[RMDB]
The record gives the reactivity of an RNA of 177 nucleotides to DMS and 2A3. For DMS the reverse transcriptase was MarathonRT. The reactions ran in a buffer of 150 mM KOAc, 10 mM MgCl2 and 150 mM bicine (pH 8.5), at 24 C. The 2A3 profile rests on 1,728 reads.
RNA sequence: GGGAACGACUCGAGUAGAGUCGAAAAGACCUCAGAUGACAACGAGAUCUGGGCGAAGCCGAUGCGCUGCGCCAGCGUACCGAUUUCUCGCUCGUGUCCCGGGUAGAGGUAACUGUGCAGGCACACCCCAACAACAGGUGUUCGCACCUGUUGUUGGAAAAGAAACAACAACAACAAC
Reactivity to DMS in 0.01 (KOAc 150mM, MgCl2 10mM, bicine 150mM(pH8.5), 24C), signal-to-noise 2, nucleotides 027 to 126: g020a080c030c000u000c010a090g030a120u010g010a080c140a110a160c030g000a050g000a010u010c100u010g020g000g010c010g020a030a040g000c110c010g010a020u000g020c010g030c010u010g000c260g010c220c070a040g000c030g000u000a020c030c020g010a060u000u010u020c130u000c050g000c020u010c020g010u000g010u000c010c020c000g000g000g020u000a080g000a010g010g000u000a030a070c080u010g010u000g000c080a110g000g010c040a070c100a140c110c080
Reactivity to 2A3 in 0.01 (KOAc 150mM, MgCl2 10mM, bicine 150mM(pH8.5), 24C), signal-to-noise 2, nucleotides 027 to 126: g030a020c000c010u010c000a030g070a230u190g060a090c110a260a090c130g000a010g000a090u000c030u070g000g000g060c020g010a010a000g010c000c010g060a070u070g000c060g010c020u060g000c050g070c080c040a020g000c020g000u010a000c020c040g030a040u060u090u040c080u010c030g040c020u000c030g080u110g050u050c000c030c040g030g020g000u070a040g000a010g010g000u000a040a030c040u080g030u080g040c030a080g040g030c000a000c010a000c040c000